[RMDB]
RNA sequence: GGGAACGACUCGAGUAGAGUCGAAAAGUCUGUGCGGUUCCAUUUGAGUAUCCUGAAAACGGGCUUUUCAGCAUGGAACGUACAUAUUAAAUAGUAGGAGUGCAUAGUGGCCCGUAUAGCAGGCAUUGAGGCGAGGAUUGUUUCGACAAUCCUCGAAUACCAGAAUUAGUUUCGACUAAUUCUGGUAAAAAGAAACAACAACAACAAC
Reactivity to DMS in 0.01 (KOAc 150mM, MgCl2 10mM, bicine 150mM(pH8.5), 24C), signal-to-noise 3, nucleotides 027 to 156: g000u010c060u010g010u000g000c010g000g000u000u000c010c000a100u010u000u010g020a190g020u000a080u000c070c020u000g000a060a060a190a110c040g020g030g040c080u010u000u000u000c020a130g010c090a040u000g010g010a070a040c020g000u010a060c050a070u000a080u010u000a050a080a210u000a100g000u000a070g020g000a140g000u000g010c010a110u010a130g010u000g010g000c010c010c000g000u000a070u000a110g020c050a050g000g010c040a110u010u000g010a120g010g030c040g010a050g020g020a030u000u000g020u000u000u010c200g010a080c000a020a020u000c010c000u010c000g010a030a080
Reactivity to 2A3 in 0.01 (KOAc 150mM, MgCl2 10mM, bicine 150mM(pH8.5), 24C), signal-to-noise 3, nucleotides 027 to 156: g030u020c040u040g030u020g050c020g000g080u080u000c010c000a020u080u030u090g040a080g050u110a080u100c010c020u050g040a040a010a040a090c080g020g000g000c020u080u060u070u060c040a020g000c020a020u040g010g050a070a000c000g030u010a000c000a000u070a030u030u220a090a110a110u130a030g040u020a010g020g090a060g010u050g000c040a060u080a110g090u100g050g000c000c000c000g020u030a030u060a060g020c050a010g030g000c030a040u060u150g040a040g030g070c000g000a000g000g000a010u000u010g010u000u080u040c040g020a020c000a000a010u000c000c010u010c000g000a000a000

About this RNA:
Chemical mapping of a 207-nucleotide RNA with DMS and 2A3. For DMS the reverse transcriptase was MarathonRT. DMS (dimethyl sulfate) methylates the pairing face of unpaired adenines and cytosines. The data come from the RNA Mapping Database (RMDB), library M2RFPK. For 2A3, 2,587 sequencing reads were counted. Conditions: 150 mM KOAc, 10 mM MgCl2 and 150 mM bicine (pH 8.5), 24 C. The DMS profile rests on 6,928 reads.